Overview:
Structure probing data (DMS and 2A3) for a 177-nucleotide construct. For 2A3, 2,725 sequencing reads were counted. Source: RMDB library TTRINS, as collected in RNAgym. Conditions: 150 mM KOAc, 10 mM MgCl2 and 150 mM bicine (pH 8.5), 24 C. For DMS, 2,829 sequencing reads were counted. 2A3 adducts were read by reverse transcription with SuperScript II with manganese.

RNA sequence: GGGAACGACUCGAGUAGAGUCGAAAAGAUAUGGAGCGGUAGGGAGAACCCGACACGCUGCUAUAUAAUCGGAAACGAUUAUAUAGCAGCGUGUCGUGAGUUCGAAGAACUAUCCGCUCCUAAGUCAUCCUCUAAAUAAGUUCGCUUAUUUAGAGGAAAAAGAAACAACAACAACAAC
Reactivity to DMS in 0.01 (KOAc 150mM, MgCl2 10mM, bicine 150mM(pH8.5), 24C), signal-to-noise 2, nucleotides 027 to 126: g000a080u010a300u020g000g000a010g020c010g000g000u000a010g000g010g010a110g010a020a010c000c010c000g020a020c000a010c010g010c000u000g010c000u000a010u000a000u010a020a000u000c000g030g010a120a190a200c000g010a020u000u010a000u000a020u000a020g010c000a010g000c020g010u000g010u000c000g000u000g000a140g020u000u000c010g000a080a160g000a170a170c000u000a010u000c020c020g000c010u000c000c000u000a010a090g020u010c020a140
Reactivity to 2A3 in 0.01 (KOAc 150mM, MgCl2 10mM, bicine 150mM(pH8.5), 24C), signal-to-noise 1, nucleotides 027 to 126: g020a010u090a030u210g020g010a020g000c000g000g000u020a010g050g000g000a050g010a020a010c000c030c020g000a000c040a030c070g050c020u000g220c000u090a010u010a010u010a020a000u020c040g040g090a300a060a040c040g000a020u300u000a070u050a000u000a290g000c190a010g040c050g000u010g010u020c000g000u030g000a090g010u000u000c010g000a110a030g000a000a000c000u000a050u160c040c000g000c000u000c000c000u010a060a000g020u010c000a070